[RMDB]
RNA sequence: GGGAACGACUCGAGUAGAGUCGAAAAAAAAUCGGUAAACUCAAAGUUGUUAGAAUUGCAAGAUUCACCUGUAAACAAUACGUGUAGAGUAAUUGUUAGUGAUAACUCGUAUCGGAAAAUAGGGAAAAACUAUGUAUAGAUUCGUCUAUACAUAGUUAAAAGAAACAACAACAACAAC
Reactivity to DMS in 0.01 (KOAc 150mM, MgCl2 10mM, bicine 150mM(pH8.5), 24C), signal-to-noise 5, nucleotides 027 to 126: a090a030a080a050u010c050g010g010u010a060a070a070c050u010c050a110a090a110g010u000u000g000u000u000a080g010a080a060u000u000g010c140a080a080g000a070u000u010c020a160c020c010u010g000u010a070a070a130c060a040a020u000a040c010g010u010g010u020a120g010a090g010u020a030a060u010u010g010u010u010a080g010u010g020a070u010a030a020c010u000c010g010u010a050u010c020g010g000a040a040a050a040u010a040g000g000g000a070a040a080
Reactivity to 2A3 in 0.01 (KOAc 150mM, MgCl2 10mM, bicine 150mM(pH8.5), 24C), signal-to-noise 3, nucleotides 027 to 126: a000a000a000a000u070c030g060g040u040a040a070a060c020u030c130a140a120a040g020u010u030g030u060u080a070g050a110a110u050u110g030c070a040a000g010a130u010u060c030a050c060c010u000g040u070a000a110a010c020a070a070u050a070c060g000u050g080u190a020g040a020g080u020a070a140u060u070g080u110u080a080g040u060g140a040u120a080a000c000u000c050g210u300a060u060c000g040g090a030a070a020a000u080a070g000g010g020a000a090a000
An RNA of 177 nucleotides, treated with DMS and 2A3 and read out base by base. For 2A3 the reverse transcriptase was SuperScript II with manganese. Reactivities are given for positions 27 through 126. It was measured as part of the RMDB libraries RFM100 and RFMREP. DMS adducts were read by reverse transcription with MarathonRT. The RNA was probed in 150 mM KOAc, 10 mM MgCl2 and 150 mM bicine (pH 8.5) at 24 C.